The record gives the reactivity of an RNA of 207 nucleotides to 2A3. 2A3 adducts were read by reverse transcription with SuperScript II with manganese. Values cover nucleotides 27 to 156. Conditions: 150 mM KOAc, 10 mM MgCl2 and 150 mM bicine (pH 8.5), 24 C.
RNA sequence: GGGAACGACUCGAGUAGAGUCGAAAAUUUCGCGGAUGCUCUUGGCGGCAUUCUUGAGGCCUUCAAUGCCGUUUUGUGUUAAUUCGCGAAUUCUAGAUGAAGCUCUACGCCACGCUUCCAAGAUUUUCGCACGCAAUUCGGGAGAUUUUGCCUUGGCCCAGUCGAUAGGUUUCGACCUAUCGACUGGAAAAGAAACAACAACAACAAC
Reactivity to 2A3 in 0.01 (KOAc 150mM, MgCl2 10mM, bicine 150mM(pH8.5), 24C), signal-to-noise 1, nucleotides 027 to 156: u040u040u000c000g000c000g000g000a000u010g060c020u010c030u080u080g000g040c020g000g030c000a020u080u180c110u130u200g030a040g070g200c010c000u080u130c020a020a010u020g010c000c020g000u010u020u080u070g010u020g000u010u210a160a060u050u020c000g030c000g000a000a010u030u000c040u030a150g030a230u070g020a040a010g000c050u100c090u170a100c050g090c090c000a050c020g000c000u010u010c020c020a020a130g030a100u120u120u000u050c020g030c060a020c070g050c020a050a030u150u120c020g020g050g010a040g010a090u020u020u090u160g040c020c010u050u120g020g020c000